[RMDB]
RNA sequence: GGGAACGACUCGAGUAGAGUCGAAAAGGAUCUGAGUACUUAUAAGUGCGAAGUGAGUGAGGGUCUUACGAGCACCAAUUACAGCCCUCUAUUAAGUAUCGAAGAUCGGCCGGAGAUCGAGAUACAACUAUUACCCGGCGACUGUACGAAGAUCCGAAAUUACCAUCGGUUUCGACCGAUGGUAAUUAAAAGAAACAACAACAACAAC
Reactivity to DMS in 0.01 (KOAc 150mM, MgCl2 10mM, bicine 150mM(pH8.5), 24C), signal-to-noise 2, nucleotides 027 to 156: g050g020a050u000c010u000g010a300g010u000a020c010u020u000a140u000a080a010g010u000g010c050g000a100a240g010u000g000a110g000u000g010a070g010g030g010u010c040u000u000a090c080g000a300g000c010a050c020c090a090a160u000u010a080c080a170g050c020c000c000u000c040u000a120u000u000a060a180g010u000a020u000c000g010a140a220g000a020u000c000g020g090c030c150g070g000a300g010a000u000c040g020a300g050a010u000a050c050a050a100c140u000a030u010u000a050c000c000c000g030g000c030g040a050c120u000g010u010a040c060g020a260a090g020a100u000c020c000g010a010
Reactivity to 2A3 in 0.01 (KOAc 150mM, MgCl2 10mM, bicine 150mM(pH8.5), 24C), signal-to-noise 3, nucleotides 027 to 156: g000g000a000u020c010u010g000a000g040u000a020c040u130u080a190u120a300a070g010u010g010c010g020a060a020g000u010g030a000g000u080g010a000g000g020g000u080c020u020u010a020c010g000a010g010c000a010c090c070a100a150u160u110a050c060a090g040c000c020c000u000c010u020a100u080u270a180a040g000u000a000u010c020g030a030a000g000a010u010c030g050g000c000c010g030g000a110g000a020u000c010g010a010g000a060u010a010c010a030a010c020u040a030u250u210a120c010c000c000g000g010c000g020a050c080u110g000u020a000c000g000a000a000g000a000u000c000c000g000a000